An RNA of 207 nucleotides, treated with 2A3 and DMS and read out base by base. For DMS, 13,674 sequencing reads were counted. The RNA was probed in 150 mM KOAc, 10 mM MgCl2 and 150 mM bicine (pH 8.5) at 24 C. Reactivities are given for positions 27 through 156. For 2A3, 22,135 sequencing reads were counted.

RNA sequence: GGGAACGACUCGAGUAGAGUCGAAAAUCCUAAGUCGAAUGGUGCAGGACGUUGAAACAUCCUUGUCAGACUAUCGGAAACGAUAGUCUUGGAUUUAGGAUGUGGAGUCCUGCGCAUUCGAUAUGGAAAAACCUACAUCCCGUUCGCGGGAUGUAGGGAUGAAUAUACGAUUCGUCGUAUAUUCAUCAAAAGAAACAACAACAACAAC
Reactivity to 2A3 in 0.01 (KOAc 150mM, MgCl2 10mM, bicine 150mM(pH8.5), 24C), signal-to-noise 7, nucleotides 027 to 156: u020c010c000u040a110a020g020u010c000g010a000a010u060g240g040u160g160c000a000g010g000a000c010g140u230u060g000a010a020a000c000a000u000c000c000u000u010g000u010c000a000g000a000c000u000a000u000c000g030g050a100a050a070c010g000a000u000a010g010u000c000u010u080g050g010a010u260u110u180a000g000g000a000u000g000u000g000g000a010g000u000c000c000u000g000c000g000c000a000u000u000c000g000a000u010a070u060g040g020a040a100a030a050a040c000c000u000a000c000a000u000c000c010c010g010u040u070c300g000c010g090g000g000a000u000g000u000a000g010g000
Reactivity to DMS in 0.01 (KOAc 150mM, MgCl2 10mM, bicine 150mM(pH8.5), 24C), signal-to-noise 4, nucleotides 027 to 156: u000c000c010u030a060a200g010u000c010g000a020a010u000g040g030u020g010c000a010g000g020a030c000g000u000u000g020a300a180a050c000a020u000c000c000u000u010g020u000c010a040g020a040c000u000a010u000c000g020g010a190a130a280c000g030a010u000a000g010u010c000u000u010g030g000a040u000u010u010a030g010g000a010u000g010u000g000g010a280g010u000c000c010u020g030c000g020c010a010u000u000c020g010a030u000a090u010g000g000a070a080a060a120a240c010c000u000a010c000a010u000c000c000c000g010u000u010c300g020c040g010g000g010a000u010g010u000a000g000g000